[RMDB]
RNA sequence: GGGAACGACUCGAGUAGAGUCGAAAACAUGUCAAGUCCCUAGGAGACGUUUGGAAAGUAGGAGUCAUUGUCAUCACCUUAUUCUCACCUGGCCUCUUUCCGGAUGUUUCUCCAACAGGUCUUGCAGAAACAGUCCAUUGUGACCUUCAGCCUGUGAGGUAAAUCCAUCAUUCGUGAUGGAUUUACCAAAAGAAACAACAACAACAAC
Reactivity to 2A3 in 0.01 (KOAc 150mM, MgCl2 10mM, bicine 150mM(pH8.5), 24C), signal-to-noise 3, nucleotides 027 to 156: c050a060u150g060u180c010a000a040g030u020c010c000c000u010a020g000g000a000g000a000c000g000u010u010u030g040g040a030a000a040g030u220a070g080g100a100g060u080c070a110u050u110g110u080c010a050u120c020a140c070c040u190u200a230u230u100c150u030c080a070c060c040u040g060g000c000c000u000c000u000u000u000c000c000g010g000a000u000g010u060u170u000c000u010c000c000a000a010c020a000g000g000u010c020u080u020g000c030a010g090a040a060a020c050a030g040u000c030c050a180u080u200g060u160g050a030c020c000u040u080c020a020g030c000c020u060g040u060g070a060
Reactivity to DMS in 0.01 (KOAc 150mM, MgCl2 10mM, bicine 150mM(pH8.5), 24C), signal-to-noise 1, nucleotides 027 to 156: c080a130u000g030u000c080a060a110g010u000c020c000c030u000a300g000g000a060g020a020c020g040u010u000u030g060g030a050a000a100g000u000a030g020g000a270g000u000c040a140u020u000g000u000c100a140u000c130a030c080c020u000u000a090u000u000c040u010c050a060c070c080u030g010g000c040c000u000c000u000u010u000c120c020g020g020a090u000g020u000u000u000c010u010c000c030a020a200c240a050g000g020u010c050u000u000g000c070a060g020a100a030a040c040a050g030u000c020c050a230u000u000g000u000g020a000c000c030u000u000c040a200g040c000c020u010g010u010g020a240
An RNA of 207 nucleotides, treated with 2A3 and DMS and read out base by base. DMS adducts were read by reverse transcription with MarathonRT. It was measured as part of the RMDB library OK3TST.